[RMDB]
RNA sequence: GGGAACGACUCGAGUAGAGUCGAAAAGGGGCGAGGGUGUUUAGCCCUUGGAACCGCAGUUGGUUCCUCGGAACUAAACUCGUGGUUCCUGUGGUUCACACCUGACCUCCUGAGCAGAAAAGAAAAAAGAAUUGCGGCUCGGAGGAGCGCUUCAGGGCCGUAGUAUCUGCUUCGGCAGAUACUACGGAAAAGAAACAACAACAACAAC
Reactivity to 2A3 in 0.01 (KOAc 150mM, MgCl2 10mM, bicine 150mM(pH8.5), 24C), signal-to-noise 2, nucleotides 027 to 156: g040g000g030g020c030g020a070g020g000g010u010g050u060u040u090a010g020c000c000c010u020u020g000g020a010a010c000c000g000c000a010g010u000u020g000g010u000u010c000c020u010c160g070g000a010a030c020u160a300a050a000c040u180c190g010u030g000g030u010u040c010c000u020g050u230g010g000u040u050c070a000c010a000c000c000u040g010a010c000c000u000c000c000u040g000a000g020c030a000g090a070a110a070a030g180a020a110a050a060a010a000g110a050a110u140u140g050c100g020g030c020u010c020g030g000a030g060g010a050g060c060g040c040u040u040c040a040g050g100g000